[RMDB]
RNA sequence: GGGAACGACUCGAGUAGAGUCGAAAAUGACGGCAAAAAGAAUGGUAGAAAAAUUUUUCGACAAUUACAUCGAUCCCGUCAGACUUGCGCAGGAAACGGUGGAUGAAUUGACUUUCAACGAACACGCGGCUACAAAGAAUUUCGAUUCUUUGUAGCCAAAAGAAACAACAACAACAAC
Reactivity to DMS in 0.01 (KOAc 150mM, MgCl2 10mM, bicine 150mM(pH8.5), 24C), signal-to-noise 3, nucleotides 027 to 126: u000g010a090c100g000g010c070a080a070a070a090a120g010a110a080u000g010g020u000a110g000a020a030a090a120a110u000u000u010u000u000c010g010a050c040a050a090u000u000a040c050a120u000c050g020a150u000c140c010c000g010u000c040a020g010a110c070u000u000g000c050g010c060a070g010g010a080a050a080c100g010g000u010g010g030a050u000g000a100a070u000u000g010a090c120u000u000u010c060a080a100c090g010a110a070c120a060c130g010c200
Reactivity to 2A3 in 0.01 (KOAc 150mM, MgCl2 10mM, bicine 150mM(pH8.5), 24C), signal-to-noise 1, nucleotides 027 to 126: u020g000a010c000g010g050c060a050a000a250a000a000g070a050a160u110g030g040u080a090g030a050a060a080a150a180u080u150u040u020u030c000g000a010c040a040a070u170u080a040c000a080u020c020g010a040u040c000c010c010g030u020c010a000g010a020c030u060u130g020c050g000c060a030g010g030a000a070a050c050g000g030u040g030g140a120u070g050a070a150u120u080g020a050c070u010u160u080c030a110a030c080g100a080a020c020a000c100g070c060
Chemical mapping of a 177-nucleotide RNA with DMS and 2A3. Conditions: 150 mM KOAc, 10 mM MgCl2 and 150 mM bicine (pH 8.5), 24 C. The 2A3 profile rests on 1,146 reads. The data come from the RNA Mapping Database (RMDB), library OK2TRN. The DMS profile rests on 1,657 reads.